Background: Chemical mapping of a 177-nucleotide RNA with DMS. Source: RMDB library TTRDES, as collected in RNAgym.
RNA sequence: GGGAACGACUCGAGUAGAGUCGAAAAGAUAUGGAUCGGCCAAGACAUGCUGGGCAGGGUCGGAAACGACCCGAUGCAGCAACAGCUUGGAUCGAUCCUAAGUCAAAGGGGGUCUUCGGACCCCCAACUAAGCACUGUUCUUCGGAACAGUGCUUAGAAAAGAAACAACAACAACAAC
Reactivity to DMS in 0.01 (KOAc 150mM, MgCl2 10mM, bicine 150mM(pH8.5), 24C), signal-to-noise 2, nucleotides 027 to 126: g000a040u000a300u000g000g000a000u000c000g000g000c000c000a010a030g020a080c050a200u010g000c000u000g000g010g010c160a280g010g000g000u010c000g020g020a130a100a280c000g000a020c000c000c010g040a070u030g010c000a000g010c000a000a060c300a180g000c000u000u000g000g010a070u000c000g010a000u000c000c000u000a000a090g010u010c030a070a150a110g010g000g010g010g020u000c000u000u000c230g060g010a040c000c000c000c000c020a000a000